This 177-nucleotide RNA was probed chemically with DMS. It was measured as part of the RMDB library OK2TRN. DMS adducts were read by reverse transcription with MarathonRT. The reactions ran in a buffer of 150 mM KOAc, 10 mM MgCl2 and 150 mM bicine (pH 8.5), at 24 C.
RNA sequence: GGGAACGACUCGAGUAGAGUCGAAAAACUCAAUCCGUUGACAUGUUAGCUGUCAAAACAGGCGUUGCUAUUGAACAGCUGCUUUAUGCGAUCCAACAACUGUAUACUGGGUUCCAGGGAAAGCAAAAUACAGACCACCAUUCGUGGUGGUCUGUAUAAAAGAAACAACAACAACAAC
Reactivity to DMS in 0.01 (KOAc 150mM, MgCl2 10mM, bicine 150mM(pH8.5), 24C), signal-to-noise 2, nucleotides 027 to 126: a080c020u000c010a130a100u000c090c060g000u000u000g050a090c110a060u020g020u030u000a080g000c050u000g000u010c020a050a030a100a060c140a070g010g010c180g060u010u020g030c050u000a150u010u000g020a070a060c050a020g010c020u000g000c060u010u010u000a060u020g050c170g000a090u000c070c060a120a030c080a020a100c050u000g000u020a020u000a110c170u000g010g000g000u000u000c130c020a100g010g010g020a030a050a130g020c120a060a020a010
Overview
The DMS profile rests on 799 reads.